The data come from the RNA Mapping Database (RMDB), libraries RFM100 and RFMREP. This 177-nucleotide RNA was probed chemically with 2A3 and DMS. Values cover nucleotides 27 to 126. As a SHAPE reagent, 2A3 marks flexible, mostly unpaired nucleotides at the ribose 2'-OH. For DMS the reverse transcriptase was MarathonRT.
RNA sequence: GGGAACGACUCGAGUAGAGUCGAAAAGUGGGAGGAUCGCUUGAGCCCAGGAGUUCUGGGCUGUAGUGCGCUAUGCCGAUCGGGUGUCCGCACUAAGUUCGGCAUCAAUAUGGUGACCUCCCGGGAGCGUAGUGAUAUGAUUCGUCAUAUCACUACGAAAAGAAACAACAACAACAAC
Reactivity to 2A3 in 0.01 (KOAc 150mM, MgCl2 10mM, bicine 150mM(pH8.5), 24C), signal-to-noise 9, nucleotides 027 to 126: g190u170g000g000g010a010g020g010a230u030c010g010c020u050u100g110a010g000c000c000c010a010g060g080a200g080u300u200c000u000g000g010g000c000u000g010u020a050g030u040g050c080g000c090u040a010u020g000c000c000g020a030u020c050g040g020g000u010g010u020c080c150g100c040a000c010u050a160a120g010u020u010c000g000g000c000a010u020c010a030a100u120a080u280g020g010u020g010a020c000c000u000c000c000c000g000g050g000a090g020
Reactivity to DMS in 0.01 (KOAc 150mM, MgCl2 10mM, bicine 150mM(pH8.5), 24C), signal-to-noise 9, nucleotides 027 to 126: g020u020g010g000g010a020g000g000a110u010c010g010c010u000u010g010a030g010c000c000c000a020g010g020a190g020u030u030c000u000g000g000g010c000u000g010u010a030g010u010g010c190g010c180u010a040u000g010c000c000g000a030u010c060g010g000g010u000g000u010c300c160g000c020a020c010u010a070a100g010u000u000c010g000g000c010a010u000c130a070a110u020a080u020g010g010u000g000a140c010c000u000c000c000c000g000g010g000a110g010